[RMDB]
An RNA of 177 nucleotides, treated with 2A3 and DMS and read out base by base. The reactions ran in a buffer of 150 mM KOAc, 10 mM MgCl2 and 150 mM bicine (pH 8.5), at 24 C. 2A3 adducts were read by reverse transcription with SuperScript II with manganese. The DMS profile rests on 934 reads. High DMS reactivity at an A or C suggests that its Watson-Crick edge is free.
RNA sequence: GGGAACGACUCGAGUAGAGUCGAAAAUCUGCAUUGGCACCACCGAUAAUCGAAGAACCUCGGUUGAAAGAGCUUGGAAAUGCCACUCCACCAUUGGAAUGGUUUGGAUUGCACAGAGAAAAGCUACCAGUGUAUGUCGGUUCGCCGACAUACACUGAAAAGAAACAACAACAACAAC
Reactivity to 2A3 in 0.01 (KOAc 150mM, MgCl2 10mM, bicine 150mM(pH8.5), 24C), signal-to-noise 2, nucleotides 027 to 126: u000c030u000g030c040a090u030u100g080g000c010a040c030c000a010c040c010g020a030u110a070a050u120c090g060a110a030g080a100a120c000c050u020c010g050g000u010u090g090a090a140a100g070a020g000c010u080u060g030g020a050a070a040u030g030c030c000a010c030u030c000c020a000c010c030a070u010u150g180g160a300a070u070g010g090u010u110u180g020g000a010u000u050g020c020a040c010a000g120a030g010a070a100a020a000g000c010u020a050c070
Reactivity to DMS in 0.01 (KOAc 150mM, MgCl2 10mM, bicine 150mM(pH8.5), 24C), signal-to-noise 2, nucleotides 027 to 126: u000c060u000g000c000a100u000u000g010g020c060a070c040c030a030c050c010g010a040u000a050a090u010c060g010a150a220g010a150a170c140c050u010c060g030g020u000u000g030a070a090a160g010a060g000c040u010u020g000g020a150a070a080u020g010c300c010a060c100u000c020c000a050c110c140a100u000u030g030g000a070a040u000g030g020u000u000u000g000g000a040u000u000g020c130a080c060a040g010a090g000a210a090a010a030g010c040u000a140c230